[RMDB]
RNA sequence: GGGAACGACUCGAGUAGAGUCGAAAAAAGCUGGAUUCGUCCAGCUUAAACUAAGGGAUGUAGCGCAGCUUGGUAGCGCUUUUGUUUUGGAUACAAAAUGUCACGGGUUCAAAUCCUGUCAUCCCUACCAGGUCCAGUGAAUUUUCGAAUUCACUAAGACAUGAUUAAUCUUCGGAUUAAUCAUGUCAAAAGAAACAACAACAACAAC
Reactivity to 2A3 in 0.01 (KOAc 150mM, MgCl2 10mM, bicine 150mM(pH8.5), 24C), signal-to-noise 4, nucleotides 027 to 156: a000a000g010c010u020g000g010a020u040u080c200g060u030c080c000a000g010c000u000u000a000a000a000c020u040a040a030g010g000g000a000u010g040u090a020g010c010g000c020a060g040c100u150u180g100g030u160a040g010c010g000c020u050u010u000u040g050u000u040u040u120g080g000a060u090a220c020a000a040a020a030u120g070u130c040a010c020g010g000g010u060u110c000a030a020a030u030c000c000u000g000u000c000a000u000c000c000c000u000a050c020c060a040g090g050u050c060c020a000g000u000g010a010a010u010u020u020u150c140g070a010a000u020u000c000a000c010u020a050a040
Reactivity to DMS in 0.01 (KOAc 150mM, MgCl2 10mM, bicine 150mM(pH8.5), 24C), signal-to-noise 2, nucleotides 027 to 156: a030a000g020c010u000g010g000a030u010u010c300g030u000c000c010a010g010c000u010u000a040a060a050c100u020a120a120g020g000g010a080u000g010u000a030g020c050g050c060a160g000c080u010u010g030g040u010a130g000c000g000c020u000u010u000u000g000u010u000u000u010g020g020a260u010a170c030a030a030a050a110u020g000u010c050a030c020g010g030g000u010u000c160a080a270a140u000c030c000u000g010u010c000a060u000c010c010c000u000a110c040c070a090g010g000u000c050c110a070g000u000g010a030a030u000u010u000u010c240g010a040a000u000u000c010a000c030u030a050a160
Chemical mapping of a 207-nucleotide RNA with 2A3 and DMS. For DMS the reverse transcriptase was MarathonRT. For DMS, 3,951 sequencing reads were counted. Conditions: 150 mM KOAc, 10 mM MgCl2 and 150 mM bicine (pH 8.5), 24 C.